Notes:
The data come from the RNA Mapping Database (RMDB), library RNAMAK. Chemical mapping of a 207-nucleotide RNA with 2A3.

[RMDB]
RNA sequence: GGGAACGACUCGAGUAGAGUCGAAAAGGGGUCAUGUGCUAUGAAGGAUACGCGAGGGAGCUUUGAUCUACACUGAAGCCUCCACGGUGUAGGGAGCUCCCUCAUCUGGAGCACAUGACGGAGGCACCCAAAACAUGCCAGCUUCGGCUGGCAUGAAGGAUGUCACAAUGUUCGCAUUGUGACAUCCAAAAGAAACAACAACAACAAC
Reactivity to 2A3 in 0.01 (KOAc 150mM, MgCl2 10mM, bicine 150mM(pH8.5), 24C), signal-to-noise 1, nucleotides 027 to 156: g040g010g090g020u020c010a010u010g020u020g000c000u040a190u300g000a000a000g000g000a010u080a170c160g050c130g180a030g000g000g000a000g040c010u300u170u010g010a000u000c000u010a000c000a010c000u050g030a070a010g010c010c000u000c000c000a000c010g000g050u000g000u000a020g000g000g000a000g000c000u000c030c010c000u000c000a000u000c000u000g000g010a000g000c000a000c000a000u000g000a000c000g000g000a000g040g020c010a020c000c000c000a020a070a000a040c000a000u000g000c000c000a000g000c010u070u240c280g090g000c000u020g010g000c000a000u010g000a000a000
Record summary:
The reactions ran in a buffer of 150 mM KOAc, 10 mM MgCl2 and 150 mM bicine (pH 8.5), at 24 C.